[RMDB]
RNA sequence: GGGAACGACUCGAGUAGAGUCGAAAACACAGACUGGUAAGGGGCUGUUCUAAAUGAGGUGGGGACACCCUCUCUGCUCUCGAAACUCACAGUAGAGUGUGACAUUGGGGCCUUUAGUCUGAUAGGAUAGUAUGGAUUCGUUCGCGAAUCCAUACUAAAAAGAAACAACAACAACAAC
Reactivity to DMS in 0.01 (KOAc 150mM, MgCl2 10mM, bicine 150mM(pH8.5), 24C), signal-to-noise 2, nucleotides 027 to 126: c090a240c020a040g000a040c010u000g000g010u020a110a090g000g000g010g010c130u010g000u010u010c030u000a040a080a120u000g010a060g030g020u000g020g010g010g000a120c190a070c110c040c050u000c030u000c020u000g000c020u020c040u000c050g000a050a040a100c220u010c070a030c060a070g020u000a080g010a130g030u000g000u000g020a040c120a140u020u010g000g010g000g000c020c060u000u010u000a020g000u000c000u000g010a120u020a110g000g010a180
Reactivity to 2A3 in 0.01 (KOAc 150mM, MgCl2 10mM, bicine 150mM(pH8.5), 24C), signal-to-noise 1, nucleotides 027 to 126: c070a020c000a010g020a010c000u060g030g130u170a080a080g070g030g010g000c020u070g130u180u010c080u120a080a160a160u160g020a020g060g080u070g010g020g030g000a020c030a060c060c000c000u000c010u000c010u010g030c010u010c000u000c040g020a100a060a020c070u060c060a030c010a050g050u150a080g000a060g110u010g010u010g000a030c000a020u040u110g010g000g080g000c000c000u070u090u120a020g000u000c020u000g020a120u080a030g130g000a010
This 177-nucleotide RNA was probed chemically with DMS and 2A3. The 2A3 profile rests on 1,058 reads. The reactions ran in a buffer of 150 mM KOAc, 10 mM MgCl2 and 150 mM bicine (pH 8.5), at 24 C. For DMS the reverse transcriptase was MarathonRT. It was measured as part of the RMDB library OK2TRN. 2A3 adducts were read by reverse transcription with SuperScript II with manganese.